[RMDB]
RNA sequence: GGGAACGACUCGAGUAGAGUCGAAAAGACCUUCAGUUCGCUGAAGGUCGAUGAUGGUAAGAGAGAUUACCAUCUGUUAAGUGAUAUGGAUAAGAACUCUCAGUGAACGUGCUUUCGAGCACGUUAAGCUGUGCACCUUAUUCGUAAGGUGCACAGCAAAAGAAACAACAACAACAAC
Reactivity to DMS in 0.01 (KOAc 150mM, MgCl2 10mM, bicine 150mM(pH8.5), 24C), signal-to-noise 2, nucleotides 027 to 126: g000a010c000c000u010u000c000a000g010u000u000c230g040c000u000g010a010a020g000g010u000c000g020a040u020g000a020u000g010g010u010a080a070g000a080g000a080g010a170u000u000a020c000c000a010u000c000u000g000u000u010a060a100g010u000g000a100u020a070u000g010g000a060u010a070a030g010a140a120c080u000c050u010c010a150g000u000g000a010a040c000g010u000g000c000u000u000u010c170g010a020g010c000a010c010g010u000u000a020a090
Reactivity to 2A3 in 0.01 (KOAc 150mM, MgCl2 10mM, bicine 150mM(pH8.5), 24C), signal-to-noise 2, nucleotides 027 to 126: g020a000c000c030u000u000c000a010g010u030u050c140g010c110u010g000a000a000g000g020u010c000g000a000u010g000a010u000g000g000u020a070a040g080a030g010a010g030a100u000u040a000c000c000a020u000c020u000g090u070u150a180a120g060u040g180a070u070a070u300g150g060a070u070a120a060g050a120a070c010u000c000u020c040a070g050u080g190a030a000c000g000u000g020c000u080u060u060c200g040a010g010c000a000c000g000u010u000a010a010